[RMDB]
RNA sequence: GGGAACGACUCGAGUAGAGUCGAAAACAUGCGCGUAAGAACAGCCGCGUUCAUUCAGAGUCAAGAGCCCUUCUGGUUCGUUGCGUGAAUGUAGAAAUAUACAUCUUACGACUGAGCGUCGGCUCGGUCUAGGCAUCCUGUUCGCGGGGUGUCUAGAAAAAGAAACAACAACAACAAC
Reactivity to DMS in 0.01 (KOAc 150mM, MgCl2 10mM, bicine 150mM(pH8.5), 24C), signal-to-noise 9, nucleotides 027 to 126: c090a080u030g010c070g010c040g010u010a060a070g010a090a110c170a070g000c050c010g010c020g010u000u000c020a030u010u000c060a110g010a110g010u020c040a040a050g000a030g000c010c020c230u030u020c140u030g000g010u000u000c010g000u010u010g010c030g010u000g000a050a020u000g010u000a020g010a100a080a120u040a110u020a030c050a030u000c070u010u010a010c060g000a080c060u000g000a010g000c010g000u030c090g000g000c000u000c040g000g010
Reactivity to 2A3 in 0.01 (KOAc 150mM, MgCl2 10mM, bicine 150mM(pH8.5), 24C), signal-to-noise 9, nucleotides 027 to 126: c040a050u180g020c070g000c020g080u100a070a020g030a130a040c020a030g010c010c000g000c000g010u010u010c010a020u020u020c020a010g020a010g110u040c010a050a010g010a010g010c000c020c000u110u070c080u110g020g020u040u010c040g120u140u140g030c020g030u050g030a070a020u020g010u050a030g120a120a260a010u300a020u010a020c010a020u010c030u060u030a010c020g020a030c010u020g000a000g010c030g100u180c070g130g000c000u000c010g020g010